An RNA of 207 nucleotides, treated with 2A3 and DMS and read out base by base. It was measured as part of the RMDB library RNAMAK. Reactivities are given for positions 27 through 156. For 2A3, 1,980 sequencing reads were counted.

RNA sequence: GGGAACGACUCGAGUAGAGUCGAAAAACGUAUUCGUACGUCACCAAGGGGUCGACUCUCCCCACCCGUGGUCUGAUGACCUAUACUGAAGCCUCCACGGUAUAGCAAGGUCACGGAGGAGUCGACGGAGGCACCCAUUCACACGAUUCGUCGUGAAUUGGCUGAAAGUAUUCGUACUUUCAGCCAAAAAAGAAACAACAACAACAAC
Reactivity to 2A3 in 0.01 (KOAc 150mM, MgCl2 10mM, bicine 150mM(pH8.5), 24C), signal-to-noise 2, nucleotides 027 to 156: a000c020g010u040a050u110u120c210g020u050a030c010g000u010c100a060c160c040a130a150g160g020g000g000u000c000g000a020c000u020c020u100c120c000c000c000a010c010c010c020g000u010g000g010u000c000u000g220a210u240g060a170c010c000u000a000u000a010c000u000g010a070a010g010c000c000u000c010c000a010c000g000g000u010a010u000a010g020c070a050a020g000g000u020c010a000c000g000g000a010g020g000a030g000u010c000g000a010c000g000g000a000g000g010c010a010c000c030c000a100u100u080c030a010c000a010c070g230a200u260u260c140g060u040c040g030u110g020a070a090
Reactivity to DMS in 0.01 (KOAc 150mM, MgCl2 10mM, bicine 150mM(pH8.5), 24C), signal-to-noise 2, nucleotides 027 to 156: a020c020g040u000a030u000u010c180g060u000a010c050g000u020c040a180c110c060a090a190g000g030g000g050u000c030g020a100c000u000c020u020c140c050c000c030a300c140c030c070g000u000g000g000u000c000u000g050a190u010g010a130c300c000u000a070u000a030c030u010g000a070a090g000c000c010u030c000c000a300c060g010g000u000a020u000a010g000c080a180a030g000g030u000c010a020c040g010g010a150g000g000a080g010u010c050g020a100c020g050g020a050g080g020c030a040c020c030c040a160u010u010c050a180c030a040c030g020a260u010u010c140g030u000c030g060u000g000a060a090